[RMDB]
RNA sequence: GGGAACGACUCGAGUAGAGUCGAAAAACUUUCAAGAGCUUGGGCUUGGCCCAAAUCUUAGACUGUCCAAUUCUGCCUCUAUUACCAAUUUAAAUCUAUGGCUUGAACCUGUGCACUGAAAAUCAAAAUUCCAUAAAUCCUUCGGGAUUUAUGGAAUAAAAGAAACAACAACAACAAC
Reactivity to 2A3 in 0.01 (KOAc 150mM, MgCl2 10mM, bicine 150mM(pH8.5), 24C), signal-to-noise 3, nucleotides 027 to 126: a000c000u000u040u040c010a000a000g010a060g140c090u000u020g040g000g000c090u170u190g210g050c000c010c010a020a020a010u000c000u020u030a020g020a010c020u030g050u060c050c040a040a080u090u020c030u040g040c040c000u030c020u060a090u070u110a120c010c030a100a060u090u070u140a240a150a030u060c030u130a120u140g070g000c000u030u060g020a020a020c000c020u060g000u030g050c020a030c090u040g080a140a030a020a060u050c030a100a120a010
Reactivity to DMS in 0.01 (KOAc 150mM, MgCl2 10mM, bicine 150mM(pH8.5), 24C), signal-to-noise 2, nucleotides 027 to 126: a220c030u000u000u020c030a040a050g000a060g050c180u000u000g000g000g000c020u020u020g020g030c000c030c010a020a030a030u000c000u000u010a080g010a040c070u000g000u030c010c030a080a160u050u040c040u000g010c020c000u000c020u020a050u010u000a060c060c030a090a070u020u070u000a040a120a110u020c070u020a030u000g010g010c010u000u000g000a090a070c050c040u000g010u000g010c050a080c010u000g000a030a030a030a110u040c050a020a040a100